[RMDB]
RNA sequence: GGGAACGACUCGAGUAGAGUCGAAAAUAUUACAUCUUCGGAUGUAAUAACUGGUGGUGGCUGGCUUGUUGCUAGUGGCGCAACUGUUGCCAAGACUGCGCAAUCGCUCUGAAUUCGUUCAGAGCAACAUGUAGAUUACUUUCGAGUAAUCUACAUGAAAAGAAACAACAACAACAAC
Reactivity to 2A3 in 0.01 (KOAc 150mM, MgCl2 10mM, bicine 150mM(pH8.5), 24C), signal-to-noise 9, nucleotides 027 to 126: u020a000u000u010a000c000a010u000c000u030u030c210g110g010a010u000g000u010a000a000u010a020a040c060u100g080g010u040g020g020u030g050g060c040u010g010g000c030u050u130g010u030u030g050c020u040a090g150u070g240g030c080g000c030a010a020c020u070g160u300u080g010c010c000a020a020g040a060c030u040g000c070g000c040a040a090u130c110g000c000u000c000u010g020a030a020u070u070c170g050u070u000c020a000g000a000g000c000a000a000
Reactivity to DMS in 0.01 (KOAc 150mM, MgCl2 10mM, bicine 150mM(pH8.5), 24C), signal-to-noise 8, nucleotides 027 to 126: u000a010u000u000a000c000a000u000c000u000u010c200g030g010a010u000g010u000a000a000u000a020a140c090u010g010g020u000g010g020u000g000g020c060u000g000g010c040u000u000g010u000u000g010c020u000a100g020u000g010g010c130g010c030a040a060c050u000g010u010u000g010c030c030a040a100g000a090c060u000g010c040g020c120a110a080u010c160g000c000u000c000u000g000a020a030u000u010c190g010u000u000c000a010g000a010g010c010a030a050